[RMDB]
RNA sequence: GGGAACGACUCGAGUAGAGUCGAAAAGCACGUGGGACCUGCAGCUAGGAGACAGGCGAUCAACUCUAUGGGGAUCGAUUACGUUGAUCUCGAUAUUGAUUUGUUUGUUUCUCUAGAUAUGUGGCACACAGGUGCAGCAAUGGAGCUUGCGCAGGAGCAUCAGUAGUGUCUUCGGACACUACUGAUGAAAAGAAACAACAACAACAAC
Reactivity to DMS in 0.01 (KOAc 150mM, MgCl2 10mM, bicine 150mM(pH8.5), 24C), signal-to-noise 2, nucleotides 027 to 156: g000c020a040c040g030u000g010g000g000a130c040c000u030g000c030a070g000c040u000a060g000g010a070g000a020c000a030g010g040c000g030a010u000c040a020a040c140u010c160u020a040u010g020g030g000g040a010u000c020g030a060u010u010a050c220g030u000u000g010a020u000c020u010c000g000a080u000a040u000u020g000a070u000u000u020g050u020u000u000g020u010u000u000c000u010c020u000a060g010a050u000a090u000g020u000g000g020c040a120c050a100c000a100g040g000u000g020c000a140g000c060a060a090u010g020g010a120g010c050u000u000g010c080g030c060a060g010g010a220g030
Reactivity to 2A3 in 0.01 (KOAc 150mM, MgCl2 10mM, bicine 150mM(pH8.5), 24C), signal-to-noise 4, nucleotides 027 to 156: g010c030a010c070g050u040g010g050g060a100c000c020u050g000c010a020g020c010u020a000g000g010a010g010a010c000a000g020g000c000g000a000u010c000a010a080c100u020c010u240a030u030g050g000g000g000a010u010c010g010a030u090u200a190c270g040u020u090g010a000u000c010u010c050g070a010u000a020u030u010g020a010u030u060u300g040u010u010u010g020u020u000u000c170u040c000u050a000g030a020u080a060u080g030u020g020g000c030a010c000a000c000a060g140g000u030g000c030a030g020c010a020a100u100g020g030a050g040c060u050u050g020c100g010c060a050g060g020a020g050
Background: Structure probing data (DMS and 2A3) for a 207-nucleotide construct. The RNA was probed in 150 mM KOAc, 10 mM MgCl2 and 150 mM bicine (pH 8.5) at 24 C. For 2A3 the reverse transcriptase was SuperScript II with manganese. For DMS, 4,951 sequencing reads were counted. For 2A3, 3,769 sequencing reads were counted.